[RMDB]
An RNA of 207 nucleotides, treated with 2A3 and DMS and read out base by base.
For 2A3 the reverse transcriptase was SuperScript II with manganese.
DMS adducts were read by reverse transcription with MarathonRT.
RNA sequence: GGGAACGACUCGAGUAGAGUCGAAAAUCCCAAAGGUUGCCGAAUCCGAAAGGUAUGGAGGAACCGCUUUUUGGGGUUAAUCUGCAGUGAAGCUGCAGUAGGGAUACCUUCUGUCCCGCACCCGACAGCUAACUCCGCAGGCAAUAAAGGAAGGAGAGCUGAUAGGCAUAUUCGUAUGCCUAUCAGCAAAAGAAACAACAACAACAAC
Reactivity to 2A3 in 0.01 (KOAc 150mM, MgCl2 10mM, bicine 150mM(pH8.5), 24C), signal-to-noise 1, nucleotides 027 to 156: u000c000c000c000a000a050a010g050g000u030u010g030c000c000g060a060a130u000c010c000g020a030a050a060g040g000u060a080u150g000g000a020g010g030a050a070c030c000g020c000u100u040u010u070u220g050g000g000g020u020u040a040a040u090c010u000g000c010a000g000u130g210a090a040g090c010u000g000c030a040g000u010a010g000g000g000a000u060a120c000c000u000u000c010u020g000u010c000c000c000g000c000a000c000c000c000g060a080c060a040g010c000u020a060a060c000u000c000c020g010c100a040g000g000c000a000a000u100a070a070a000g000g010a010a000g050g020a090g010a010
Reactivity to DMS in 0.01 (KOAc 150mM, MgCl2 10mM, bicine 150mM(pH8.5), 24C), signal-to-noise 1, nucleotides 027 to 156: u000c000c000c000a080a090a090g000g080u000u000g000c000c000g020a230a270u010c050c000g000a240a120a050g000g000u000a020u010g030g000a120g000g000a120a180c080c070g000c120u000u020u000u000u050g020g010g050g020u010u000a090a110u000c020u010g010c000a010g000u010g020a140a260g010c010u010g010c030a060g010u000a030g010g000g010a050u000a030c000c090u000u000c010u010g010u000c160c000c000g000c130a060c000c000c020g000a080c100a030g030c020u000a100a200c010u000c010c010g000c160a120g000g050c030a030a090u000a090a070a070g010g010a060a040g050g010a300g010a180